[RMDB]
RNA sequence: GGGAACGACUCGAGUAGAGUCGAAAAGAUAUGGACCCUUCGUGUGGACGUUGAAAUCGGAAACGAUGGAGUCCAUACACGAGAGGGUCCUAAGUCAAAUCGCGGGAGUGUUCGCACUCCCGCGAAACAUAUAGUUGGGGUUCGCCCCAACUAUAUGAAAAGAAACAACAACAACAAC
Reactivity to DMS in 0.01 (KOAc 150mM, MgCl2 10mM, bicine 150mM(pH8.5), 24C), signal-to-noise 5, nucleotides 027 to 126: g000a060u000a300u000g010g000a020c000c000c000u000u000c020g030u000g000u000g000g000a020c000g000u000u010g000a090a120a020u000c000g010g000a140a120a180c000g010a010u000g000g000a140g010u000c000c010a090u000a030c030a020c020g000a050g020a030g020g010g010u000c000c000u000a000a070g000u010c030a080a110a130u000c000g030c000g020g010g010a040g040u000g010u010u010c230g000c000a020c010u000c000c000c010g020c000g000a000a020a110
Reactivity to 2A3 in 0.01 (KOAc 150mM, MgCl2 10mM, bicine 150mM(pH8.5), 24C), signal-to-noise 4, nucleotides 027 to 126: g010a020u050a040u130g000g010a000c000c000c000u000u020c020g000u010g020u040g000g000a000c030g100u300u110g040a060a040a010u020c010g000g030a080a020a040c010g000a000u010g000g020a010g020u000c000c000a010u120a010c000a000c010g170a200g040a040g160g010g010u010c000c000u000a000a000g000u000c010a020a010a100u050c020g000c020g040g070g010a020g020u070g030u150u300c300g170c100a010c000u020c000c020c010g000c020g010a010a000a000